RNA sequence: GGGAACGACUCGAGUAGAGUCGAAAAGUGUACACUUCACAAGGGUUUGUGGUGGUCAAUGGCAAAGUUUCUACACUUGUCAAACAAGUGUUAGACUUGCUUAAUAAGGGUAUGCAACUUUUGCAUAGGAGUGACGUGUUCGCACGUCACAAAAGAAACAACAACAACAAC
Reactivity to DMS in 0.01 (KOAc 150mM, MgCl2 10mM, bicine 150mM(pH8.5), 24C), signal-to-noise 7, nucleotides 027 to 129: g040u010g000u060a050c120a090c060u010u060c050a020c130a050a080g000g000g000u010u020u010g040u000g020g030u000g050g010u010c100a070a080u040g030g010c000a010a030a030g020u040u040u040c010u000a030c020a000c020u000u000g020u030c210a100a110a300c030a010a030g010u010g010u000u000a050g010a000c070u030u000g020c030u020u030a020a010u100a110a070g010g000g040u020a030u000g040c030a020a050c110u000u000u000u000g040c050a050u040a060g010g020a130
Reactivity to 2A3 in 0.01 (KOAc 150mM, MgCl2 10mM, bicine 150mM(pH8.5), 24C), signal-to-noise 6, nucleotides 027 to 129: g010u000g020u040a020c050a020c030u030u070c020a000c010a120a080g100g000g020u080u120u060g040u040g010g020u010g010g010u060c040a030a140u100g000g010c000a020a080a070g010u020u020u060c020u000a000c010a000c000u000u000g010u080c110a070a110a130c010a050a000g010u000g000u040u020a010g000a020c000u010u010g000c000u060u100a090a060u180a150a050g080g000g040u050a010u060g000c020a000a000c030u050u070u150u040g000c000a020u030a100g050g040a060

The record gives the reactivity of an RNA of 170 nucleotides to DMS and 2A3. It was measured as part of the RMDB library 15KLIB. The reactions ran in a buffer of 150 mM KOAc, 10 mM MgCl2 and 150 mM bicine (pH 8.5), at 24 C. High 2A3 reactivity points to a flexible backbone, as in loops and unpaired stretches. For DMS, 24,435 sequencing reads were counted.